[RMDB]
RNA sequence: GGGAACGACUCGAGUAGAGUCGAAAACAUGCCACAUCCCAGUUAGACUGGUAUCAACUUCUUCGAUCCUAUUAGCGACGCUAACAUUAACCAUUAUCAUCACAACUUCGCUAUCCACAGUUGUGGGCCGAUCCCUGGCAUUCGUGCCAGGGAUCGGAAAAGAAACAACAACAACAAC
Reactivity to 2A3 in 0.01 (KOAc 150mM, MgCl2 10mM, bicine 150mM(pH8.5), 24C), signal-to-noise 2, nucleotides 027 to 126: c020a040u170g060c030c000a140c020a040u110c070c030c000a000g000u000u070a190g010a080c020u070g000g010u020a020u070c050a000a100c030u040u020c000u080u020c080g020a000u000c010c030u050a060u060u090a080g000c060g120a040c090g070c020u020a070a030c040a090u080u070a000a080c000c030a110u140u130a080u220c040a000u060c020a000c000a010a120c000u070u080c020g000c070u000a060u050c010c010a180c000a050g020u020u060g000u020g000g060g010
The record gives the reactivity of an RNA of 177 nucleotides to 2A3.
The data come from the RNA Mapping Database (RMDB), library OK1LIB.
The RNA was probed in 150 mM KOAc, 10 mM MgCl2 and 150 mM bicine (pH 8.5) at 24 C.
Values cover nucleotides 27 to 126.